[RMDB]
RNA sequence: GGGAACGACUCGAGUAGAGUCGAAAAGAAAGAAAGAAGAAUCACCAGGAGGCAAGGAUCCUCAACUACGUUAUUCGGGCACCUUGAGUUGAGAGGAGCUAGUGGUGCGCCCGGCGUGGAGAUCAAAACACGACAGGCGGGUUCGCCCGCCUGUCAACGUAGAUAUACCGUUCGCGGUAUAUCUACGAAAAGAAACAACAACAACAAC
Reactivity to 2A3 in 0.01 (KOAc 150mM, MgCl2 10mM, bicine 150mM(pH8.5), 24C), signal-to-noise 5, nucleotides 027 to 156: g060a030a070a000g050a020a070a010g060a010a000g020a060a040u080c010a020c040c010a020g030g030a040g000g070c030a040a130g030g010a040u040c010c010u040c020a020a040c020u160a070c060g080u150u080a100u100u170c020g010g000g000c020a040c040c060u110u200g040a010g030u030u050g050a060g010a030g030g000a010g000c010u020a020g080u010g070g000u010g040c030g010c010c000c000g010g010c020g000u030g010g020a100g000a030u140c060a030a060a040a070c080a050c110g010a000c000a000g000g000c010g010g010g030u030u030c120g050c040c000c000g000c000c000u000g010u000c000a000a000
Reactivity to DMS in 0.01 (KOAc 150mM, MgCl2 10mM, bicine 150mM(pH8.5), 24C), signal-to-noise 2, nucleotides 027 to 156: g010a090a060a130g000a060a040a080g000a110a120g000a140a070u000c020a080c030c000a130g000g000a130g030g010c040a090a130g030g000a080u000c070c010u000c000a070a070c040u000a100c070g030u000u000a160u000u000c060g020g010g000c050a110c030c050u000u010g000a070g010u000u000g020a140g000a080g000g000a090g000c010u000a110g020u020g000g020u000g010c060g010c010c010c030g020g030c070g020u010g040g000a080g000a120u010c060a020a050a080a090c060a070c050g010a010c010a020g000g040c020g000g000g050u000u000c300g010c040c010c010g000c000c000u000g000u000c000a000a000